[RMDB]
RNA sequence: GGGAACGACUCGAGUAGAGUCGAAAAAUUUUAGGAGACUAAUUACUAUGAUGCACAAUACAGAACAAUACGGCGUUGCAACCUCAAUCGCUGGCUGCUUGGCUCAGGAGGUAGCGCAGGAAUCAAUUAUCAACAUCUAUGCGACUGACCCAAUCAAGACGUACAUGGUUUUCGAACCAUGUACGUCAAAAGAAACAACAACAACAAC
Reactivity to 2A3 in 0.01 (KOAc 150mM, MgCl2 10mM, bicine 150mM(pH8.5), 24C), signal-to-noise 2, nucleotides 027 to 156: a000u090u110u040u040a050g090g010a070g020a030c030u050a090a030u210u120a020c030u040a000u140g040a040u060g040c030a010c000a120a060u240a060c050a060g110a110a000c020a110a050u060a140c090g030g000c030g030u020u060g070c030a030a090c020c000u030c030a030a060u170c140g000c000u080g010g060c010u110g030c000u020u090g070g020c010u060c120a030g100g000a010g000g010u010a010g010c010g000c000a030g050g050a020a010u140c050a040a080u100u080a030u080c030a010a020c010a030u020c000u140a090u090g020c030g000a030c000u030g030a060c000c000c020a040a030u160c040a090a070